[RMDB]
RNA sequence: GGGAACGACUCGAGUAGAGUCGAAAAUGAAAUAACUAGCAUGCAUAAGACGAGGUAGAGCGCGCGCUCUACCAAAACAUGUGUGUAAAAACGCACGUGUAGGCGCGGCUACACAAAUAAACAAAAACAUAUUAUCUUUCUUCGGAAAGAUAAUAUGAAAAGAAACAACAACAACAAC
Reactivity to 2A3 in 0.01 (KOAc 150mM, MgCl2 10mM, bicine 150mM(pH8.5), 24C), signal-to-noise 2, nucleotides 027 to 126: u120g030a030a030a100u130a060a030c090u040a030g010c020a020u020g000c020a050u060a160a090g080a070c080g030a030g010g000u020a010g010a010g020c170g010c090g090c140g000c190u000c010u000a010c000c000a000a020a000a000c020a000u000g010u000g000u000g000u070a000a110a000a050a000c020g020c020a040c070g000u000g000u010a020g040g000c120g000c120g200g000c000u010a010c040a000c010a020a120a010u200a040a040a010c030a000a070a020a010a000
Reactivity to DMS in 0.01 (KOAc 150mM, MgCl2 10mM, bicine 150mM(pH8.5), 24C), signal-to-noise 3, nucleotides 027 to 126: u010g000a100a090a150u010a060a160c130u000a130g010c000a020u010g000c010a040u000a070a110g020a150c140g000a270g010g020u010a000g000a030g000c010g040c300g000c280g030c000u000c000u000a040c000c000a000a030a050a060c030a000u000g010u010g000u000g010u000a020a030a040a070a160c030g010c030a030c150g010u000g000u000a090g030g000c040g020c090g020g000c030u010a010c070a020c040a070a050a050u010a030a010a020c030a000a090a060a080a090